An RNA of 177 nucleotides, treated with DMS and 2A3 and read out base by base. The 2A3 profile rests on 9,125 reads. Conditions: 150 mM KOAc, 10 mM MgCl2 and 150 mM bicine (pH 8.5), 24 C. Values cover nucleotides 27 to 126.
RNA sequence: GGGAACGACUCGAGUAGAGUCGAAAAGUGGCUCUUGGGCGAAAGUACUGACGACAGACCAGAAGCGGGAAGCCGUGAUGUUGAUAUGUGAUGCGACCGGUCUGUCGCAACGUCGUGCCUGCAGGCUGAAUAAAUAUCGGUUCGCCGAUAUUUAUUCAAAAGAAACAACAACAACAAC
Reactivity to DMS in 0.01 (KOAc 150mM, MgCl2 10mM, bicine 150mM(pH8.5), 24C), signal-to-noise 5, nucleotides 027 to 126: g020u000g010g000c010u000c040u000u000g010g000g010c000g000a070a070a140g010u000a060c070u000g010a160c000g010a030c010a010g010a020c000c000a130g020a070a240g000c000g000g000g010a170a100g000c020c020g010u000g000a120u010g000u000u000g010a090u000a070u010g010u010g010a140u010g010c000g000a080c030c080g010g000u000c000u000g000u000c010g030c030a050a060c130g010u000c040g010u000g000c010c010u000g020c170a090g010g000c100u000
Reactivity to 2A3 in 0.01 (KOAc 150mM, MgCl2 10mM, bicine 150mM(pH8.5), 24C), signal-to-noise 6, nucleotides 027 to 126: g060u050g020g000c010u000c000u140u090g060g050g010c030g040a130a090a020g080u080a050c060u060g110a080c010g000a000c000a000g000a000c010c000a030g030a140a010g010c010g010g020g030a060a020g120c020c010g030u040g030a210u140g010u090u030g050a050u030a100u270g260u120g080a080u270g030c010g020a010c000c010g010g000u000c000u000g000u010c000g000c000a010a010c020g010u010c010g010u060g070c000c010u020g020c030a030g060g000c030u030